Source information
Chemical mapping of a 207-nucleotide RNA with 2A3. It was measured as part of the RMDB library RSTRND. For 2A3 the reverse transcriptase was SuperScript II with manganese.

RNA sequence: GGGAACGACUCGAGUAGAGUCGAAAACGCUUUAGCCGCUUAAUACGGCUAGCCUCUGCACCGAUGGGCCUUAACGUCGGGUCUGGCAACAGACAGCAGAGUCAUUAGCAAGGAUCGCGUUCUGUAGGGUCACUUUACAGAACGUUAAACAAUAGGUGAACUCCAUCUUCUUCGGAAGAUGGAGUUCAAAAGAAACAACAACAACAAC
Reactivity to 2A3 in 0.01 (KOAc 150mM, MgCl2 10mM, bicine 150mM(pH8.5), 24C), signal-to-noise 1, nucleotides 027 to 156: c030g010c000u070u060u070a000g000c000c030g060c140u230u260a060a050u220a070c000g000g000c020u000a000g010c000c000u000c000u000g000c000a000c010c000g000a030u000g000g000g070c000c010u010u020a030a110c040g000u000c030g000g000g050u000c000u000g050g000c020a020a010c010a090g020a000c010a000g030c020a000g000a000g040u000c030a180u130u280a010g050c040a040a000g020g040a100u030c070g000c000g010u000u000c000u010g000u000a010g080g030g090u210c140a180c300u140u090u010a000c010a000g000a000a000c030g020u000u010a040a040a000c090a030a230u060a090g010g040u010
The reactions ran in a buffer of 150 mM KOAc, 10 mM MgCl2 and 150 mM bicine (pH 8.5), at 24 C.